An RNA of 207 nucleotides, treated with 2A3 and DMS and read out base by base.
For DMS the reverse transcriptase was MarathonRT.
The reactions ran in a buffer of 150 mM KOAc, 10 mM MgCl2 and 150 mM bicine (pH 8.5), at 24 C.
[RMDB]
RNA sequence: GGGAACGACUCGAGUAGAGUCGAAAAUCCUAAGUCUGGAGGGAGUCCCAAAAAGGGACAUCGAUCAUGGGUCGGAAACGACCCAUGGGAGUCCUACAAAGGGACGUUGAUCUCCAGAUAUGGAAAAGAACUUCUGUGCUUCGGCACAGAAGUUCAACAAACAUAGAAUGUUCGCAUUCUAUGUUUGAAAAGAAACAACAACAACAAC
Reactivity to 2A3 in 0.01 (KOAc 150mM, MgCl2 10mM, bicine 150mM(pH8.5), 24C), signal-to-noise 2, nucleotides 027 to 156: u030c010c000u040a110a040g000u010c000u000g000g010a010g010g000g000a010g010u000c020c000c040a030a040a020a030a040g080g000g000a020c050a130u150c030g070a040u040c030a000u000g000g000g000u000c010g010g010a150a060a030c020g000a000c000c030c000a000u010g000g000g000a000g000u000c000c000u020a050c130a050a080a030g000g000g000a010c020g010u040u000g000a000u000c000u000c000c000a000g000a000u000a010u000g030g010a020a090a200a260g000a020a000c000u000u010c000u000g010u000g000c010u050u090c210g080g000c000a010c010a000g000a000a000g000u010u000c010a000a000
Reactivity to DMS in 0.01 (KOAc 150mM, MgCl2 10mM, bicine 150mM(pH8.5), 24C), signal-to-noise 2, nucleotides 027 to 156: u000c020c010u000a060a280g020u000c010u000g000g010a030g000g020g030a130g020u020c010c020c010a020a070a140a190a280g020g030g030a010c030a090u020c130g000a130u010c000a000u000g020g020g030u010c010g000g010a110a150a300c010g000a020c010c000c000a010u000g000g020g010a160g000u000c000c010u000a180c100a080a240a300g000g000g020a020c010g000u010u030g000a080u000c020u000c000c000a050g030a000u000a120u000g020g010a050a110a120a240g010a000a000c000u010u000c010u000g010u010g000c000u000u010c300g050g000c000a040c000a020g000a010a000g000u000u010c010a040a130